[RMDB]
RNA sequence: GGGAACGACUCGAGUAGAGUCGAAAAACAGCUUUUAGGGGGUUUGAGGGAGUUUUAUCAGGCCUUAGAAAACAAGCAAGAAGUUAUCAUUAUUGCCCCUAUUAGCGCUUUAUUACACCCUUUACCCUCUAACGUAAUGGUUCGCCAUUACGUUAGAAAAAGAAACAACAACAACAAC
Reactivity to 2A3 in 0.01 (KOAc 150mM, MgCl2 10mM, bicine 150mM(pH8.5), 24C), signal-to-noise 2, nucleotides 027 to 126: a000c010a020g020c000u020u050u050u060a060g030g010g000g000g000u040u060u000g000a010g030g080g020a090g010u140u180u090u080a070u070c050a000g110g000c000c000u010u000a040g120a030a110a030a020c070a030a020g050c000a020a010g040a020a010g050u100u210a120u180c030a020u020u230a020u100u100g030c010c010c000c000u050a020u020u010a000g000c010g010c020u180u060u010a090u060u080a030c020a100c060c020c020u010u070u080a140c000c000c000
Reactivity to DMS in 0.01 (KOAc 150mM, MgCl2 10mM, bicine 150mM(pH8.5), 24C), signal-to-noise 4, nucleotides 027 to 126: a080c080a190g010c040u010u000u000u000a030g010g000g020g020g010u000u000u010g000a070g010g010g000a180g020u010u010u000u010a060u020c090a080g010g000c030c000u000u000a080g000a090a070a050a080c150a070a110g010c030a020a040g000a090a080g010u020u020a110u000c060a060u000u000a110u010u000g000c000c010c000c010u000a030u010u000a010g020c070g010c130u000u000u000a060u010u010a090c160a130c020c000c020u000u010u010a130c070c040c050
This 177-nucleotide RNA was probed chemically with 2A3 and DMS. 2A3 adducts were read by reverse transcription with SuperScript II with manganese. In probing experiments dimethyl sulfate is read out at A N1 and C N3, which are open when not base-paired. For 2A3, 1,764 sequencing reads were counted. The reactions ran in a buffer of 150 mM KOAc, 10 mM MgCl2 and 150 mM bicine (pH 8.5), at 24 C. The DMS profile rests on 4,388 reads.